[RMDB]
RNA sequence: GGGAACGACUCGAGUAGAGUCGAAAAGAAACUUAUCUGUGAAUCACCCAUUAAGCUGCAGACUAUCACAUGAACAUCCCUAUCCAAAAUCUUAGCUCUAAGGCUUAUGGGAUAACAAAUAGGGGCAAUGCUUUCUAUGUUUCGACAUAGAAAGCAUAAAAGAAACAACAACAACAAC
Reactivity to DMS in 0.01 (KOAc 150mM, MgCl2 10mM, bicine 150mM(pH8.5), 24C), signal-to-noise 4, nucleotides 027 to 126: g000a160a100a150c040u010u000a050u010c040u020g020u000g000a150a250u000c180a130c020c000c000a050u010u010a030a020g010c030u010g000c300a030g000a110c020u000a040u000c070a050c120a100u000g000a070a090c130a140u010c020c010c010u000a080u010c090c050a050a060a050a070u000c040u010u010a020g000c090u000c040u000a070a260g010g000c010u000u000a040u020g010g000g000a080u000a080a030c050a020a040a020u000a040g000g010g000g020c230a070
Reactivity to 2A3 in 0.01 (KOAc 150mM, MgCl2 10mM, bicine 150mM(pH8.5), 24C), signal-to-noise 2, nucleotides 027 to 126: g060a040a070a020c050u040u030a010u130c000u020g060u030g040a070a050u120c040a090c040c010c010a010u050u040a010a000g000c000u020g030c070a020g020a040c010u030a010u160c040a040c000a150u150g120a070a010c010a080u090c030c010c010u020a090u090c040c030a060a170a090a100u060c070u050u050a000g000c030u000c030u080a070a040g020g000c000u010u010a020u020g010g010g010a010u040a010a000c030a010a030a050u030a010g000g000g010g030c050a040
Source: RMDB library OK2TST, as collected in RNAgym. This 177-nucleotide RNA was probed chemically with DMS and 2A3. Values cover nucleotides 27 to 126. The 2A3 profile rests on 1,876 reads. For DMS the reverse transcriptase was MarathonRT. 2A3 adducts were read by reverse transcription with SuperScript II with manganese. For DMS, 2,158 sequencing reads were counted. The RNA was probed in 150 mM KOAc, 10 mM MgCl2 and 150 mM bicine (pH 8.5) at 24 C.